Source: RMDB library OK2TRN, as collected in RNAgym. An RNA of 177 nucleotides, treated with 2A3 and DMS and read out base by base. The DMS profile rests on 16,508 reads.

RNA sequence: GGGAACGACUCGAGUAGAGUCGAAAACGCUGGAACACAUAGAAGUGAGAAUGCCGGUAUGAGUAGCGAAAGACAGGUGAGAAUCCUGUCCACCGUAAGACUAAGGUUUCCAGGGGAAGGCUCGUCCAUAUCAAUAGUACUUCGGUACUAUUGAUAUAAAAGAAACAACAACAACAAC
Reactivity to 2A3 in 0.01 (KOAc 150mM, MgCl2 10mM, bicine 150mM(pH8.5), 24C), signal-to-noise 5, nucleotides 027 to 126: c040g010c030u020g030g020a060a010c010a000c010a070u150a130g150a280a050g120u050g050a070g080a120a080u130g010c020c000g040g000u090a120u140g090a050g060u110a010g020c020g010a020a010a010g000a000c000a010g000g000u010g010a040g030a020a030u060c000c000u000g000u000c000c010a020c020c010g050u050a080a020g010a040c030u040a050a060g040g000u010u020u040c010c010a020g000g000g000g000a040a030g040g010c030u030c040g040u030c030c010
Reactivity to DMS in 0.01 (KOAc 150mM, MgCl2 10mM, bicine 150mM(pH8.5), 24C), signal-to-noise 9, nucleotides 027 to 126: c090g000c030u000g000g010a080a080c060a070c050a130u010a120g010a090a120g010u000g000a090g000a130a090u000g010c030c030g010g010u000a060u010g000a070g010u000a090g010c040g010a100a180a110g000a020c000a010g000g010u000g000a190g000a280a140u000c010c010u000g000u000c000c050a050c210c040g010u010a050a090g010a070c070u000a070a100g000g000u000u000u000c020c020a080g000g000g000g010a070a050g000g010c060u000c070g000u000c060c070